[RMDB]
RNA sequence: GGGAACGACUCGAGUAGAGUCGAAAAGCUAUGGUGCAACUCUUUAAGGCAAUAACGAACUAAUUCUAAGCAAGUAAUGGAGAAAUGCCAGGUUCACUAUCUAGCCAUAAUAGUGCUUGACAGUAUGAGAAUCUGCUACCCUUCGGGGUAGCAGAAAUCUUUAUGAGUCGUUCGCGACUCAUAAAGAAAAAGAAACAACAACAACAAC
Reactivity to DMS in 0.01 (KOAc 150mM, MgCl2 10mM, bicine 150mM(pH8.5), 24C), signal-to-noise 1, nucleotides 027 to 156: g000c010u010a090u000g000g000u020g000c020a020a070c020u010c020u000u000u000a100a100g000g010c010a060a070u000a060a120c080g020a150a100c040u000a060a130u010u000c020u010a100a260g010c040a050a090g010u000a100a090u000g000g010a110g010a120a080a100u000g010c000c010a140g010g000u010u010c020a030c010u000a010u000c050u000a050g000c070c040a110u020a040a050u000a070g020u010g000c020u010u060g010a090c020a070g040u000a100u010g020a190g010a030a090u000c000u010g010c010u000a020c000c000c000u000u020c300g040g050g060g030u000a010g020c010a010g010a010a060a070
Reactivity to 2A3 in 0.01 (KOAc 150mM, MgCl2 10mM, bicine 150mM(pH8.5), 24C), signal-to-noise 1, nucleotides 027 to 156: g030c020u010a030u120g040g000u030g020c040a040a160c040u090c010u040u210u210a230a110g050g000c030a060a060u150a170a000c080g060a020a030c040u110a110a090u090u090c030u080a050a050g040c060a090a010g090u150a100a150u140g030g070a040g020a020a190a020u080g030c050c030a030g010g000u050u040c000a000c010u010a080u090c010u030a070g030c030c020a030u070a180a070u060a090g080u070g050c020u010u040g000a030c040a060g080u080a150u090g080a030g030a030a090u010c000u000g000c000u000a000c000c020c000u000u030c130g030g000g000g000u000a000g000c020a000g000a000a000a000
This 207-nucleotide RNA was probed chemically with DMS and 2A3.
Conditions: 150 mM KOAc, 10 mM MgCl2 and 150 mM bicine (pH 8.5), 24 C.
The 2A3 profile rests on 582 reads.
The DMS profile rests on 2,307 reads.
For 2A3 the reverse transcriptase was SuperScript II with manganese.
Source: RMDB library M2RFPK, as collected in RNAgym.